[RMDB]
About this RNA: The data come from the RNA Mapping Database (RMDB), library TTRDES. An RNA of 177 nucleotides, treated with DMS and read out base by base.
RNA sequence: GGGAACGACUCGAGUAGAGUCGAAAAAAAAAGAUAUGGACCUUAGGCUCUUGGAUUUACAAGGUCCCUAGUUCGGAAACGAACUAGAACCCUUGUUGUCAGAGCACUAAGGUCCUAAGUCAAAAAAGUAUUGCAUAAUCUUCGGAUUAUGCAAUACAAAAGAAACAACAACAACAAC
Reactivity to DMS in 0.01 (KOAc 150mM, MgCl2 10mM, bicine 150mM(pH8.5), 24C), signal-to-noise 2, nucleotides 027 to 126: a070a040a070a080a040g000a030u000a300u010g000g000a010c000c000u000u000a010g000g000c010u010c010u000u020g030g010a020u000u010u010a010c000a020a000g000g010u010c170c300c010u000a010g000u000u000c010g020g000a130a140a150c000g030a000a000c000u000a010g000a100a220c300c010c000u000u000g000u000u000g050u000c010a020g020a020g000c000a110c000u000a020a020g020g030u000c000c000u000a000a060g010u040c050a020a020a060a090a180a080